[RMDB]
RNA sequence: GGGAACGACUCGAGUAGAGUCGAAAAGAAUCUACAAUUUCCACGGAGACUGAUGUUGGCUUUACUUUGAACACUCCGCCGGUUUCUCCUCUUCCUUCGUAUUCCACUUCUCCUGCAAGUAUUCCUGAGGACAUGCUGUUGUGUCUAGAGGAGAUGCGUCUUUAGAAAGUUUCGACUUUCUAAAGACAAAAGAAACAACAACAACAAC
Reactivity to 2A3 in 0.01 (KOAc 150mM, MgCl2 10mM, bicine 150mM(pH8.5), 24C), signal-to-noise 2, nucleotides 027 to 156: g010a030a050u050c070u120a080c090a130a110u060u080u060c050c050a040c040g040g020a020g040a050c100u100g050a060u140g080u090u050g060g000c070u120u090u120a120c050u180u110u220g110a090a010c040a010c060u030c010c010g040c020c010g060g000u000u080u030c010u000c000c010u000c000u030u090c010c000u020u080c030g020u080a120u050u120c070c010a030c000u070u000c000u030c020c000u020g010c050a100a030g030u030a090u060u080c010c010u100g020a090g030g040a000c010a010u060g030c050u020g100u050u030g010u020g040u000c030u030a040g000a000g090g000a020g000a010u030g000c020
Reactivity to DMS in 0.01 (KOAc 150mM, MgCl2 10mM, bicine 150mM(pH8.5), 24C), signal-to-noise 2, nucleotides 027 to 156: g010a070a090u000c040u000a110c060a090a090u010u010u000c010c060a130c130g010g020a070g030a130c070u010g010a110u000g010u000u010g010g000c050u000u010u010a080c050u010u020u040g010a050a090c050a090c040u000c020c010g000c040c030g030g010u000u020u000c050u010c000c010u000c020u000u000c030c030u010u000c050g010u000a130u000u000c000c010a060c070u000u000c040u010c020c010u000g000c030a050a090g000u010a070u000u000c020c000u020g000a150g020g060a080c080a030u010g010c010u010g000u000u010g030u000g000u000c050u000a100g010a080g020g010a050g000a040u000g010c140